Source information: An RNA of 207 nucleotides, treated with 2A3 and read out base by base. The reactions ran in a buffer of 150 mM KOAc, 10 mM MgCl2 and 150 mM bicine (pH 8.5), at 24 C.

RNA sequence: GGGAACGACUCGAGUAGAGUCGAAAAUGUGCUUAGUCAUUCUAUUUAAAUUUCAGCACUCCAGUCAUUAAGGCAUUCUUUUUAAAUCAAUGCCAAUCAUUUGCAUGAUCUAAAAAUAUUUAACCAACUUUAGGGGCAACACAGAGAGCUAAAAACAUCAAGAAAGGCAGUUCGCUGCCUUUCUUGAAAAAGAAACAACAACAACAAC
Reactivity to 2A3 in 0.01 (KOAc 150mM, MgCl2 10mM, bicine 150mM(pH8.5), 24C), signal-to-noise 1, nucleotides 027 to 156: u000g000u000g000c040u080u190a100g020u060c020a050u070u010c020u150a300u130u220u260a000a100a070u100u200u020c120a150g000c000a000c000u010c000c000a000g010u020c070a150u070u060a050a060g000g090c030a050u040u030c000u210u160u080u080u000a050a080a040u150c080a000a050u000g070c050c040a000a000u100c130a030u100u120u150g100c030a000u020g000a030u020c000u020a000a150a000a080a030u080a150u140u300u170a070a090c060c080a000a020c000u160u220u180a020g020g040g000g090c000a070a030c030a000c000a000g020a000g020a000g020c040u050a000a060a000a000a000c070a020
The data come from the RNA Mapping Database (RMDB), library OK3TST.